[RMDB]
RNA sequence: GGGAACGACUCGAGUAGAGUCGAAAAUAAUAUGCACAUUAGCUGCGAUUGACCAGCAUACACAUAUUAGCUAUAGCGUCGAUGCGCACGCAUGCACCGGCUACGGCAUGUUAGCCACGAUACGCAUCACGCAAUUGGUCGGUGUGUGUCACGCGUGCUAGUCGGAUCAAUUCGUUGAUCCGACUAGAAAAGAAACAACAACAACAAC
Reactivity to DMS in 0.01 (KOAc 150mM, MgCl2 10mM, bicine 150mM(pH8.5), 24C), signal-to-noise 2, nucleotides 027 to 156: u010a010a060u010a050u000g030c030a190c090a130u010u000a100g030c010u000g000c030g060a240u000u000g030a100c120c020a080g020c040a230u000a110c070a050c010a040u000a050u000u000a050g000c070u000a040u000a160g010c090g000u000c020g000a060u010g010c000g040c030a100c120g020c030a100u030g010c000a030c040c030g020g010c020u000a070c300g000g060c000a040u000g010u000u020a180g040c000c030a070c050g000a150u010a050c030g010c000a050u000c020a030c000g070c020a060a100u010u010g040g020u000c050g030g010u010g010u000g010u000g000u010c070a050c040g000c020g000u010g020
Reactivity to 2A3 in 0.01 (KOAc 150mM, MgCl2 10mM, bicine 150mM(pH8.5), 24C), signal-to-noise 8, nucleotides 027 to 156: u080a000a000u060a040u110g060c050a040c050a190u140u200a090g020c040u030g020c080g260a270u110u180g090a160c050c010a000g000c020a040u090a090c050a020c020a050u060a050u100u070a040g060c100u120a060u070a230g090c060g090u070c080g090a050u150g040c000g000c010a010c070g000c000a000u030g000c000a020c010c000g030g000c010u080a040c060g040g000c030a020u090g060u110u100a030g010c030c030a100c080g060a080u160a150c060g000c030a020u060c030a010c010g020c000a040a130u120u090g000g010u020c010g010g000u000g000u000g000u010g000u050c040a030c180g020c010g010u020g020
Annotation: Conditions: 150 mM KOAc, 10 mM MgCl2 and 150 mM bicine (pH 8.5), 24 C. An RNA of 207 nucleotides, treated with DMS and 2A3 and read out base by base. Reactivities are rounded to 0.1 and cut off at 0 and 3. Reactivities are given for positions 27 through 156. The 2A3 profile rests on 5,629 reads. It was measured as part of the RMDB library OK3TST.